[RMDB]
RNA sequence: GGGAACGACUCGAGUAGAGUCGAAAAGGAAGAGAUGUAUUUAGCCUCUUGUUGAGGGGUCUCAGGGAUCGCUGCACAGGCCUGGUGAGUGUCACCAAUGAACCUCUUCAGCUUGGAGAGUUAUUUGAACUUCAAAGCUAGAAGAAACUUGAGAGAGCAUGUAACAAUUUUUCGAAAUUGUUACAUGAAAAGAAACAACAACAACAAC
Reactivity to DMS in 0.01 (KOAc 150mM, MgCl2 10mM, bicine 150mM(pH8.5), 24C), signal-to-noise 3, nucleotides 027 to 156: g000g010a080a080g000a060g010a090u010g010u000a070u000u000u000a160g000c030c010u000c020u000u010g040u000u010g000a100g030g010g010g020u010c050u000c040a150g020g020g000a080u000c050g000c010u000g000c040a100c060a080g030g020c020c040u010g000g020u010g010a170g020u010g010u010c040a090c020c040a050a110u000g020a060a080c110c050u020c010u000u000c010a050g010c010u000u000g020g030a120g010a120g010u000u000a090u000u000u000g020a070a090c010u010u000c030a060a020a030g010c010u030a110g010a050a050g000a020a050a050c060u010u000g010a140g010a140g000a130g010
Reactivity to 2A3 in 0.01 (KOAc 150mM, MgCl2 10mM, bicine 150mM(pH8.5), 24C), signal-to-noise 4, nucleotides 027 to 156: g050g010a030a030g030a010g010a050u110g040u130a160u150u170u110a040g030c010c010u020c020u060u090g070u080u080g040a030g000g010g010g020u020c050u040c070a020g030g010g010a040u060c040g000c050u050g020c040a040c000a050g070g030c010c030u050g000g020u030g020a090g020u070g070u070c030a020c070c000a020a040u100g030a050a060c010c020u010c000u020u010c010a000g000c000u000u020g020g010a040g000a010g070u070u040a160u100u240u150g080a050a030c000u010u020c050a060a060a030g000c020u080a070g010a020a010g000a070a050a020c030u070u070g000a030g010a000g000a020g070